[RMDB]
RNA sequence: GGGAACGACUCGAGUAGAGUCGAAAAUCGGUUGUUUCUCUGAAGGCAUGAUCACCCCGUCCGAUGCGGAAGUUCGUGCUUCCGUCGAACGCGAAAGUCGGACGGCGGCCAUGAGUCGCAAAGCAAAUAUACAUUUAGUAGUUCGCUACUAAAUGAACAGCGUAGCUGUGUUCGCACAGCUACGCUGAAAAGAAACAACAACAACAAC
Reactivity to 2A3 in 0.01 (KOAc 150mM, MgCl2 10mM, bicine 150mM(pH8.5), 24C), signal-to-noise 2, nucleotides 027 to 156: u190c050g040g000u000u000g000u000u010u000c080u000c100u080g130a130a010g070g000c020a020u050g020a010u060c040a050c000c020c000c000g000u000c000c000g000a000u030g010c000g000g060a040a010g000u140u300c180g130u300g040c000u000u020c040c010g000u000c050g060a120a040c100g000c020g150a120a010a010g000u000c000g020g010a000c000g000g000c020g010g000c000c050a070u090g070a040g130u110c040g010c120a020a080a030g020c050a040a120a010u200a000u050a030c020a010u020u010u000a020g010u000a000g000u050u030c180g000c120u000a000c000u000a000a000a000u000g010a030a030
Record summary:
Structure probing data (2A3) for a 207-nucleotide construct. 2A3 adducts were read by reverse transcription with SuperScript II with manganese. It was measured as part of the RMDB library M2RFPK.